[RMDB]
RNA sequence: GGGAACGACUCGAGUAGAGUCGAAAAGAAAGCCGGGCCUAGCGAACCUCAGAGUCCUCCUUGAUGGGGGCCUGAGAUGACAGAAAAACUACCUCGGGGAUAACUGGGUGGUCGCAGGCAAGAGCCCUGAAUAUCUCAGUUUCGACUGAGAUAUUCAAAAAGAAACAACAACAACAAC
Reactivity to DMS in 0.01 (KOAc 150mM, MgCl2 10mM, bicine 150mM(pH8.5), 24C), signal-to-noise 5, nucleotides 027 to 126: g000a110a110a170g030c100c060g000g000g020c010c010u000a090g030c030g000a090a060c080c000u000c010a010g000a100g000u020c000c000u000c000c010u000u040g010a120u050g020g010g000g000g020c010c000u010g000a010g010a040u000g010a100c100a140g010a090a070a100a130a070c050u010a070c100c020u010c060g020g000g010g000a090u020a070a080c030u010g000g000g010u010g000g000u000c010g010c000a050g000g020c020a070a060g010a120g000c010c000c020
Reactivity to 2A3 in 0.01 (KOAc 150mM, MgCl2 10mM, bicine 150mM(pH8.5), 24C), signal-to-noise 6, nucleotides 027 to 126: g030a040a050a000g040c030c030g040g040g000c000c010u050a050g010c020g040a030a080c010c000u010c000a010g030a050g070u070c000c010u020c010c010u100u180g110a280u290g040g000g000g000g000c000c000u000g010a010g000a020u050g020a020c040a040g190a050a100a020a040a020c030u050a030c020c030u090c060g020g010g000g050a100u080a150a080c030u020g000g000g040u060g010g030u030c040g020c090a050g020g000c010a010a000g050a010g020c000c000c000